[RMDB]
RNA sequence: GGGAACGACUCGAGUAGAGUCGAAAAGAGAACGUGUUCUCUCUCGUGUGUGAGAGAGAGUUCACGUACGAGUACGAGUGUUCGAGAGUGAACUCACACACACGAGAUCACGUUCGAUCUCUCGAACACGAACACACGAGAUCGUACACACGUUCUCAACGUACGAGUAGUUCGCUACUCGUACGUUAAAAGAAACAACAACAACAAC
Reactivity to 2A3 in 0.01 (KOAc 150mM, MgCl2 10mM, bicine 150mM(pH8.5), 24C), signal-to-noise 3, nucleotides 027 to 156: g010a010g000a000a010c020g010u040g060u070u040c030u000c000u000c010u010c040g010u000g000u000g000u070g030a090g020a030g020a010g000a020g070u040u030c040a030c030g030u060a030c030g000a000g040u130a060c060g020a080g080u050g030u020u000c030g010a030g000a010g180u060g030a030a050c010u020c000a020c000a010c000a000c000a020c090g030a000g010a070u030c010a000c070g090u080u080c000g010a040u030c030u000c000u000c040g040a080a020c000a010c070g100a150a010c070a000c010a020c080g010a020g000a120u000c000g000u030a000c030a010c000a000c020g000u010u000c010u000c010
Reactivity to DMS in 0.01 (KOAc 150mM, MgCl2 10mM, bicine 150mM(pH8.5), 24C), signal-to-noise 1, nucleotides 027 to 156: g050a030g000a010a000c000g020u090g000u000u010c040u000c110u000c020u000c010g070u000g020u000g070u000g000a100g000a210g000a090g000a020g000u010u000c050a070c110g000u000a020c000g020a150g020u000a140c010g000a300g010u020g060u000u000c000g030a080g010a110g020u030g000a080a060c030u030c020a260c010a000c060a150c060a280c050g000a070g010a020u010c000a090c080g030u010u010c000g050a030u030c040u010c000u000c030g010a020a090c000a090c000g010a120a040c050a100c070a100c070g000a140g040a110u000c010g120u000a000c030a090c020a010c000g000u000u000c020u000c000
The record gives the reactivity of an RNA of 207 nucleotides to 2A3 and DMS. The RNA was probed in 150 mM KOAc, 10 mM MgCl2 and 150 mM bicine (pH 8.5) at 24 C. The DMS profile rests on 1,541 reads. For 2A3, 2,488 sequencing reads were counted.